[RMDB]
RNA sequence: GGGAACGACUCGAGUAGAGUCGAAAAGGACAAAGCUUGACUGCCACAUUUGUACCUUCUACUAAAGGGGUUAGUGUGCUUGGCAAUCCCUAAAGUAAACUUGGACUGCAAUAUUGGUACUGUGUAAAAAUACAGCCAUGUUCGCAUGGCUGUAUUUAAAAGAAACAACAACAACAAC
Reactivity to DMS in 0.01 (KOAc 150mM, MgCl2 10mM, bicine 150mM(pH8.5), 24C), signal-to-noise 5, nucleotides 027 to 126: g020g030a070c060a050a100a130g010c070u000u010g010a110c080u000g000c020c030a050c080a110u000u000u000g010u000a060c020c010u000u000c100u000a040c070u020a040a210a040g010g000g000g020u000u010a070g020u000g010u010g020c130u000u010g010g010c030a050a050u000c010c020c010u010a060a200a040g000u010a030a070a070c160u000u000g000g010a090c080u000g000c040a030a030u010a120u010u000g010g000u000a040c080u000g000u000g020u010a000a060
Reactivity to 2A3 in 0.01 (KOAc 150mM, MgCl2 10mM, bicine 150mM(pH8.5), 24C), signal-to-noise 2, nucleotides 027 to 126: g040g010a020c020a060a090a010g040c040u090u010g020a080c040u030g000c000c000a050c010a120u060u050u050g030u050a050c000c000u110u150c030u030a060c000u040a020a080a000g050g020g030g000u000u010a160g000u080g060u110g170c110u100u050g060g020c000a010a010u000c000c000c000u080a130a120a000g020u010a010a140a140c070u060u090g000g040a060c060u020g000c070a020a090u060a090u180u100g020g050u080a160c060u060g010u010g020u200a030a190